[RMDB]
RNA sequence: GGGAACGACUCGAGUAGAGUCGAAAAAUAAGGAGAACUGGCUGUCCACCAUAUUUUCACUGGCCUCGAACAAGCAUCUCAACUGGAGUCACUACCCAUCCAAACCAACCUGGUGUAGUGACGGAGAGGCGGUCUGUCUAUUCGUAGACAGACCGCCAAAAGAAACAACAACAACAAC
Reactivity to 2A3 in 0.01 (KOAc 150mM, MgCl2 10mM, bicine 150mM(pH8.5), 24C), signal-to-noise 1, nucleotides 027 to 126: a020u130a020a020g070g000a060g000a000a020c000u000g020g010c000u130g090u000c000c000a000c000c020a060u150a070u180u070u170u240c140a150c070u000g030g000c030c000u050c000g040a010a010c020a050a000g040c100a050u000c020u030c120a120a300c160u210g120g000a040g000u000c000a000c000u000a000c010c030c020a100u140c070c040a080a000a040c080c110a080a200c000c070u040g000g000u170g000u000a000g000u000g000a000c000g010g000a020g000a000